Conditions: 150 mM KOAc, 10 mM MgCl2 and 150 mM bicine (pH 8.5), 24 C. The record gives the reactivity of an RNA of 177 nucleotides to 2A3 and DMS.
[RMDB]
RNA sequence: GGGAACGACUCGAGUAGAGUCGAAAAGAAAGAAAGAAAGUGUAUCUGUGAUGAUAAUUUGGCUCCCUCUACUGAAGUCUCUGAGGAAAACUGCCAUUCGUUACCCAAUUUCUUACUGAGAUACUAACUGAUAUGGCUUGUUCGCAAGCCAUAUCAGAAAAGAAACAACAACAACAAC
Reactivity to 2A3 in 0.01 (KOAc 150mM, MgCl2 10mM, bicine 150mM(pH8.5), 24C), signal-to-noise 3, nucleotides 027 to 126: g100a000a060a000g220a040a050a020g070a040a060a010g060u110g010u050a060u030c040u040g040u040g110a070u070g010a000u040a180a090u170u080u080g020g000c010u090c030c020c000u020c000u070a150c040u130g050a090a040g090u040c060u000c050u110g000a030g050g000a080a020a060a080c090u120g020c060c000a030u030u050c020g030u030u030a090c000c000c000a020a010u000u020u010c030u000u070a120c060u090g030a010g000a060u030a000c040u040a240a030
Reactivity to DMS in 0.01 (KOAc 150mM, MgCl2 10mM, bicine 150mM(pH8.5), 24C), signal-to-noise 2, nucleotides 027 to 126: g000a070a130a100g000a090a090a020g010a040a090a050g020u040g030u010a020u000c000u000g010u030g030a040u040g010a010u020a060a100u000u000u000g010g000c030u020c100c000c020u000c050u000a130c110u020g000a090a020g000u030c050u000c130u000g000a100g000g000a070a030a050a090c150u040g000c010c010a050u000u000c050g010u000u000a070c000c030c010a080a090u000u030u010c020u030u020a020c070u000g010a110g000a040u000a030c130u030a080a150